This 207-nucleotide RNA was probed chemically with DMS and 2A3. For DMS the reverse transcriptase was MarathonRT. As a SHAPE reagent, 2A3 marks flexible, mostly unpaired nucleotides at the ribose 2'-OH. 2A3 adducts were read by reverse transcription with SuperScript II with manganese. Conditions: 150 mM KOAc, 10 mM MgCl2 and 150 mM bicine (pH 8.5), 24 C.

RNA sequence: GGGAACGACUCGAGUAGAGUCGAAAAUAUUCCGGUGUGGGAUACUUGGUAAUAUGUCACGCUAAUUGCAUAAGAUUGUAGGACGGAAUUUACAGUCUUGGUUUUUAUAAACCUGAAACUAAGUAAGAAUAGUAAGAGCGGUUCGCCGCUCUUACAACCAAUGAUUGUACUUCGGUACAAUCAUUGGAAAAGAAACAACAACAACAAC
Reactivity to DMS in 0.01 (KOAc 150mM, MgCl2 10mM, bicine 150mM(pH8.5), 24C), signal-to-noise 2, nucleotides 027 to 156: u000a150u000u010c010c000g030g010u000g020u000g010g050g020a210u010a010c010u010u020g010g030u010a010a070u000a030u000g000u000c050a070c150g040c160u000a080a130u000u000g010c010a050u010a020a050g000a030u010u000g020u000a050g000g010a200c030g020g010a090a300u000u000u000a030c010a040g000u000c000u000u000g000g010u000u020u010u010u000a140u010a050a040a030c030c020u000g000a080a070a040c040u000a060a050g000u010a050a140g000a070a090u000a160g000u010a000a010g000a040g010c000g040g010u000u010c260g030c000c000g000c000u000c000u000u000a000c010a020a170
Reactivity to 2A3 in 0.01 (KOAc 150mM, MgCl2 10mM, bicine 150mM(pH8.5), 24C), signal-to-noise 5, nucleotides 027 to 156: u080a030u010u010c020c000g060g050u150g040u130g090g140g020a030u020a050c020u020u030g010g010u020a010a020u020a030u070g210u200c050a030c130g100c120u120a150a110u230u150g000c010a020u010a030a020g000a020u010u030g000u010a010g040g110a030c030g010g010a010a020u030u050u020a010c010a010g000u000c010u010u010g000g030u030u030u010u020u040a270u150a080a030a010c000c000u010g030a020a020a020c010u020a000a040g040u020a040a050g070a160a090u110a130g000u000a000a000g000a000g000c000g000g030u030u050c160g010c040c000g000c000u000c000u000u000a000c000a000a000